RNA sequence: GGGAACGACUCGAGUAGAGUCGAAAACAAACACCAGCGAAAAGGAAGAAAAACCAAAACGUGAACUACUUGACGAAACACGAACGCUGGUGUAAAUCGUCAAGUAACAAAAACAAAACAAACAAAACAUGAGCUAUCACUUCGGUGAUAGCUCAUGAAAAGAAACAACAACAACAAC
Reactivity to 2A3 in 0.01 (KOAc 150mM, MgCl2 10mM, bicine 150mM(pH8.5), 24C), signal-to-noise 2, nucleotides 027 to 126: c000a010a010a000c000a000c000c010a000g000c000g060a070a060a000a020g060g150a050a090g210a150a070a080a040a030c020c050a020a090a120a060c090g090u120g130a020a000c070u030a000c000u000u010g000a000c000g060a090a090a000c220a010c030g020a020a000c000g010c000u000g020g000u040g000u000a000a000a010u000c000g010u000c000a000a000g000u050a000a000c020a000a060a000a000a010c110a080a110a000a000c130a080a070a030c040a010a190a000a000
This 177-nucleotide RNA was probed chemically with 2A3. The RNA was probed in 150 mM KOAc, 10 mM MgCl2 and 150 mM bicine (pH 8.5) at 24 C. For 2A3 the reverse transcriptase was SuperScript II with manganese.